[RMDB]
RNA sequence: GGGAACGACUCGAGUAGAGUCGAAAACUAUUUAUAGACAGAACAGUGGAAAACGUAUAUCGCUAUAAACCUUAAACCCCGAUUCUUCCAGUCGUACAAUUCCACAUAGGCGAGGCAUAAGCGAAAGGAGCCAUAGUAUCUUCGGAUACUAUGGCUCAAAAGAAACAACAACAACAAC
Reactivity to 2A3 in 0.01 (KOAc 150mM, MgCl2 10mM, bicine 150mM(pH8.5), 24C), signal-to-noise 2, nucleotides 027 to 126: c000u000a080u010u140u040a060u000a040g070a040c050a000g150a180a000c030a000g110u100g000g110a030a050a060a030c000g000u030a140u000a030u150c000g000c050u010a020u040a110a100a070c030c030u010u100a130a030a000c000c000c000c000g030a070u050u000c000u130u030c000c010a040g030u050c000g010u050a010c020a000a000u100u000c000c000a020c070a130u000a020g000g080c010g000a000g000g040c050a060u050a170a060g000c040g020a160a000a000g060
Reactivity to DMS in 0.01 (KOAc 150mM, MgCl2 10mM, bicine 150mM(pH8.5), 24C), signal-to-noise 1, nucleotides 027 to 126: c000u000a030u030u100u000a000u010a140g060a090c010a170g060a030a060c100a080g030u000g000g000a000a060a070a090c140g020u010a010u040a010u000c020g030c070u000a000u000a010a120a130c090c010u000u020a200a090a220c080c050c000c000g000a030u020u000c080u050u000c030c070a110g000u000c010g000u000a060c050a050a080u000u030c000c020a070c120a100u020a130g000g000c100g000a090g000g000c020a050u000a030a100g000c100g010a030a160a150g050
This 177-nucleotide RNA was probed chemically with 2A3 and DMS. DMS adducts were read by reverse transcription with MarathonRT. For 2A3 the reverse transcriptase was SuperScript II with manganese. 2A3 is a SHAPE reagent: it acylates the 2'-hydroxyl of flexible nucleotides of all four kinds. It was measured as part of the RMDB library OK1LIB. The 2A3 profile rests on 1,013 reads.